[RMDB]
RNA sequence: GGGAACGACUCGAGUAGAGUCGAAAAUGGUGUUUGCCGCCGCGGCCGCGGACAGCGCGCCCUGCCCGAUGACAUAGAGCCGCACUUUGCCGUUGGCAGUUUGCCCGGACUGAUCGCCUUUGACGCCGUCAGUUCAAGGUUUCGACCUUGAACUGACAAAAGAAACAACAACAACAAC
Reactivity to 2A3 in 0.01 (KOAc 150mM, MgCl2 10mM, bicine 150mM(pH8.5), 24C), signal-to-noise 3, nucleotides 027 to 126: u070g000g050u110g030u020u070u150g040c020c020g010c030c060g080c030g030g000c020c030g000c030g000g010a060c020a070g000c040g010c000g010c040c000c010u010g000c000c090c010g040a100u130g040a060c040a100u160a020g050a020g050c020c000g020c030a040c040u060u080u100g010c030c000g130u020u120g040g010c020a050g010u060u110u130g050c010c020c000g000g000a000c010u030g010a070u080c030g010c020c000u120u020u080g020a030c110g030c040c060
Reactivity to DMS in 0.01 (KOAc 150mM, MgCl2 10mM, bicine 150mM(pH8.5), 24C), signal-to-noise 1, nucleotides 027 to 126: u010g000g040u020g000u000u000u000g040c020c010g100c050c090g030c020g000g000c040c070g000c030g030g000a040c080a050g080c060g000c080g060c040c000c050u000g040c050c030c010g040a060u010g000a040c080a110u040a060g000a050g000c010c060g000c040a050c030u040u000u000g010c050c000g040u000u000g110g030c000a020g010u020u000u000g040c070c020c040g000g010a060c090u020g020a100u020c000g000c000c010u000u020u020g000a070c170g000c010c050
Source information
Structure probing data (2A3 and DMS) for a 177-nucleotide construct. For 2A3, 2,202 sequencing reads were counted. For DMS, 1,925 sequencing reads were counted. Source: RMDB library OK1LIB, as collected in RNAgym.